[RMDB]
RNA sequence: GGGAACGACUCGAGUAGAGUCGAAAAAGAAAGAUUUAGUGAGUUUUUUGCUCGCUAUGAGUAGAGUGUCUUCUUCUUAGACUGUAUACUCUACUUUACGGUUUUUUCCGUUCGAGUAUAUAGUAAAGGCUGUAUCCUAGUUCGCUAGGAUACAGCCAAAAGAAACAACAACAACAAC
Reactivity to 2A3 in 0.01 (KOAc 150mM, MgCl2 10mM, bicine 150mM(pH8.5), 24C), signal-to-noise 2, nucleotides 027 to 126: a000g080a030a060a000g040a070u140u120u030a010g020u070g000a010g030u020u000u000u010u300u300g020c000u000c000g000c040u000a000u070g040a050g030u250a040g010a100g010u100g030u000c050u020u020c000u200u000c010u060u040a070g000a020c010u000g000u010a010u000a000c010u000c020u020a070c030u040u000u060a000c020g020g030u020u100u010u080u300u180c000c010g000u000u020c030g000a000g000u000a030u010a010u020a010g040u080a050a070a050